[RMDB]
RNA sequence: GGGAACGACUCGAGUAGAGUCGAAAAGAUAUGGAAUGGGACAUGCUGGAGAAGGGUCGGAAACGACCCGUAACAGCAACAGCCACAUUCCUAAGUCAAAAGAGAAAGGAGUUCGCUCCUUUCUCAACAAGCCAAUGUGGUUCGCCACAUUGGCUUGAAAAGAAACAACAACAACAAC
Reactivity to DMS in 0.01 (KOAc 150mM, MgCl2 10mM, bicine 150mM(pH8.5), 24C), signal-to-noise 2, nucleotides 027 to 126: g010a060u040a300u000g000g040a070a010u000g010g010g050a010c000a300u010g010c010u010g010g010a140g040a150a190g010g000g010u010c000g020g040a080a090a300c010g020a040c000c010c020g000u000a030a210c000a000g000c000a030a090c300a040g000c010c010a040c010a000u010u000c000c000u010a020a170g030u010c020a120a100a110a120g000a000g000a000a010a020g000g000a030g000u000u000c300g010c010u000c020c000u040u000u000c000u000c000a050a120
Conditions: 150 mM KOAc, 10 mM MgCl2 and 150 mM bicine (pH 8.5), 24 C. An RNA of 177 nucleotides, treated with DMS and read out base by base. DMS adducts were read by reverse transcription with MarathonRT. Values cover nucleotides 27 to 126.